Annotation
Structure probing data (2A3 and DMS) for a 207-nucleotide construct. For 2A3 the reverse transcriptase was SuperScript II with manganese. For DMS the reverse transcriptase was MarathonRT. The RNA was probed in 150 mM KOAc, 10 mM MgCl2 and 150 mM bicine (pH 8.5) at 24 C. The 2A3 profile rests on 1,818 reads. In probing experiments dimethyl sulfate is read out at A N1 and C N3, which are open when not base-paired.

RNA sequence: GGGAACGACUCGAGUAGAGUCGAAAACACAAUUCUCUAAGCGAUGAGAAGCGUGUGGAAAAUUAGGGAAGGGCUACGGCUAUAAUCCUAAGAAAGCUUAUCUACAAGCGGAGGUAUUCUCAGCACGAAAACCAUUUGGCGUUCGCGCCAAAUGGAAGCAUACUAAGACCUUCGGGUCUUAGUAUGCAAAAGAAACAACAACAACAAC
Reactivity to 2A3 in 0.01 (KOAc 150mM, MgCl2 10mM, bicine 150mM(pH8.5), 24C), signal-to-noise 3, nucleotides 027 to 156: c010a000c010a010a060u050u020c020u000c010u050a200a130g150c070g130a120u140g010a050g000a020a020g020c050g010u020g000u070g010g010a070a030a060a070u060u030a080g010g010g030a060a050g080g010g010c020u020a030c160g030g000c000u000a020u070a220a030u110c010c010u010a000a030g050a080a070a010g030c020u060u060a050u170c070u080a060c060a070a040g010c010g010g050a010g030g030u090a170u150u070c020u000c000a030g020c020a020c070g070a070a040a070a040c020c000a000u000u000u000g000g000c000g020u030u060c200g040c000g000c060c010a000a000a000u000g010g000a010a000
Reactivity to DMS in 0.01 (KOAc 150mM, MgCl2 10mM, bicine 150mM(pH8.5), 24C), signal-to-noise 1, nucleotides 027 to 156: c030a000c020a020a140u020u000c010u000c000u010a160a170g010c170g030a190u010g010a040g040a030a030g020c220g060u000g020u000g000g020a060a030a090a100u000u000a100g040g060g010a200a150g000g000g060c040u020a120c090g060g000c020u000a080u000a050a190u000c040c050u000a040a180g000a130a100a130g020c060u000u000a070u000c090u000a140c100a160a050g030c000g020g040a040g030g020u010a050u000u000c040u000c020a050g030c060a170c040g000a110a010a050a100c000c030a080u000u000u000g050g000c000g130u000u000c300g030c010g020c020c030a000a000a010u000g030g030a020a110